[RMDB]
RNA sequence: GGGAACGACUCGAGUAGAGUCGAAAAGAUAUGGACCCGUUAGGGAGCCUAGUAUCGGAAACGAUACAGGCAUCGAUCUAACCGGGUCCUAAGUCAAAACGCGUUACGUGUUCGCACGUAACGCGAAGUUACAUAUCGACUUCGGUCGAUAUGUAACAAAAGAAACAACAACAACAAC
Reactivity to 2A3 in 0.01 (KOAc 150mM, MgCl2 10mM, bicine 150mM(pH8.5), 24C), signal-to-noise 3, nucleotides 027 to 126: g020a000u020a020u050g000g000a000c000c010c020g020u000u010a060g030g230g150a090g010c000c010u040a140g000u000a010u010c000g000g000a020a010a010c010g000a000u000a010c000a000g010g000c010a040u300c200g120a110u000c010u010a010a090c250c190g020g000g000u000c000c010u010a000a000g010u000c000a010a000a100a130c030g000c010g000u010u000a000c000g000u010g060u100u120c260g040c120a010c000g010u010a000a000c000g000c000g000a010a000
Reactivity to DMS in 0.01 (KOAc 150mM, MgCl2 10mM, bicine 150mM(pH8.5), 24C), signal-to-noise 3, nucleotides 027 to 126: g000a060u000a130u010g000g010a030c000c000c000g020u010u000a000g020g030g010a090g000c010c000u000a130g020u000a000u000c000g020g000a050a060a090c010g000a000u010a020c000a040g020g020c010a150u010c260g010a080u020c000u010a000a010c100c100g020g010g010u000c000c000u000a010a070g000u010c010a130a060a110a180c030g000c000g010u000u000a000c010g010u010g010u000u010c260g050c000a010c000g010u010a000a010c010g030c000g020a000a020
This 177-nucleotide RNA was probed chemically with 2A3 and DMS. The RNA was probed in 150 mM KOAc, 10 mM MgCl2 and 150 mM bicine (pH 8.5) at 24 C. The data come from the RNA Mapping Database (RMDB), library TTRDES. Values cover nucleotides 27 to 126. High 2A3 reactivity points to a flexible backbone, as in loops and unpaired stretches.